Structure probing data (2A3 and DMS) for a 207-nucleotide construct. The DMS profile rests on 2,049 reads. DMS adducts were read by reverse transcription with MarathonRT.
[RMDB]
RNA sequence: GGGAACGACUCGAGUAGAGUCGAAAAGGGGUCUUUCCGCUGUCUCUUGGACCGAUACGCAAGAGCUGAAGCCUCCACGGCUUGAUGACCGUAUCGCUAGAGACAUGAAAGACGGAGGCACCCAAAAUCUGCAUAGGGUUUCGACCCUAUGCAGAAAGAGUAACAUAACCUUCGGGUUAUGUUACUCAAAAGAAACAACAACAACAAC
Reactivity to 2A3 in 0.01 (KOAc 150mM, MgCl2 10mM, bicine 150mM(pH8.5), 24C), signal-to-noise 3, nucleotides 027 to 156: g040g000g010g040u020c000u000u020u000c020c010g050c040u010g000u000c000u010c020u050u230g110g000a110c040c040g000a020u020a000c010g020c100a300a300g020a040g080c030u030g050a080a000g020c000c020u080c110c060a070c020g010g000c020u010u090g070a110u130g040a170c000c040g000u000a000u000c000g020c020u010a010g000a000g000a000c000a000u070g000a000a020a000g000a010c010g000g010a020g010g030c010a050c000c000c000a020a060a000a150u000c000u000g000c000a010u000a000g020g000g020u070u100u090c190g080a060c000c010c000u000a000u000g000c000a000g000a000a000a000
Reactivity to DMS in 0.01 (KOAc 150mM, MgCl2 10mM, bicine 150mM(pH8.5), 24C), signal-to-noise 1, nucleotides 027 to 156: g000g000g050g000u000c010u000u000u000c010c080g040c260u020g000u000c020u000c010u010u020g010g000a010c300c020g010a050u000a020c000g000c020a020a100g000a050g030c000u020g010a070a130g000c000c010u010c050c020a280c070g000g000c010u070u010g000a030u000g020a100c290c020g000u000a070u000c020g060c010u000a020g020a040g000a000c000a020u010g020a050a070a030g050a020c050g000g040a030g000g000c000a040c010c000c010a040a040a100a070u000c000u000g000c010a040u000a000g000g050g030u000u000u000c280g000a040c010c000c030u020a010u000g020c000a010g010a000a040a210

Conditions: 150 mM KOAc, 10 mM MgCl2 and 150 mM bicine (pH 8.5), 24 C.